[RMDB]
RNA sequence: GGGAACGACUCGAGUAGAGUCGAAAAGUGAUUCCAGUUAUGCCAGUUUGCUAAUUACAUGACAUUAGUUCAGUACUUACAUGUAUGUAGGGGUGAUAUUCAAAGACUACUGGUAUGGCCUGGGAUCUGACCAAUCCAAACGGAUACCAUAAACCUACGCUCCCAUCGGAUUCGUCCGAUGGGAGCGAAAAGAAACAACAACAACAAC
Reactivity to 2A3 in 0.01 (KOAc 150mM, MgCl2 10mM, bicine 150mM(pH8.5), 24C), signal-to-noise 2, nucleotides 027 to 156: g120u090g050a030u000u000c000c010a010g000u030u030a000u000g010c010c010a010g030u120u210u100g120c070u100a060a050u130u110a030c060a070u020g180a030c010a090u060u040a040g030u100u080c130a050g090u080a050c030u000u070a010c030a030u080g060u060a060u060g080u050a060g000g000g000g050u020g070a060u080a200u280u110c070a060a140a100g060a190c010u020a000c000u060g000g000u020a040u000g010g020c020c050u010g050g000g010a000u000c000u000g020a000c010c030a000a070u000c020c000a050a050a160c100g000g030a010u070a250c020c020a130u220a070a060a060c010c010u030a020
Description: The data come from the RNA Mapping Database (RMDB), library OK3TST. This 207-nucleotide RNA was probed chemically with 2A3. Reactivities are rounded to 0.1 and cut off at 0 and 3. For 2A3, 537 sequencing reads were counted.